[RMDB]
RNA sequence: GGGAACGACUCGAGUAGAGUCGAAAAACGCGGAGUACGCUCCGCGACAACACUUCUUUCGACCCGCUAACCGAGACCUAUGGGUCGUUAAAUUACGUCUCUAUUUUACUCACAUAACAUCGCACAAAAAACGUGGUUCGGUUCGCCGAACCACGAAGUAACUUCGUGAGUUCGCUCACGAAGUUACAAAAGAAACAACAACAACAAC
Reactivity to 2A3 in 0.01 (KOAc 150mM, MgCl2 10mM, bicine 150mM(pH8.5), 24C), signal-to-noise 3, nucleotides 027 to 156: a000c020g000c000g000g000a000g010u010a030c180g010c080u000c000c000g040c000g010a000c010a030a050c040a000c040u140u150c060u090u280u140c020g000a000c030c000c000g060c250u230a030a020c030c020g010a010g010a010c000c000u010a080u200g000g000g000u010c000g030u030u020a000a000a010u180u030a010c020g000u000c000u030c000u010a160u010u140u060u030a110c090u080c070a070c020a100u130a130a050c030a110u180c080g010c170a060c120a030a130a040a050a050a010c080g000u010g000g000u000u000c010g010g030u020u040c100g000c120c000g000a000a000c000c000a000c000g000a000a000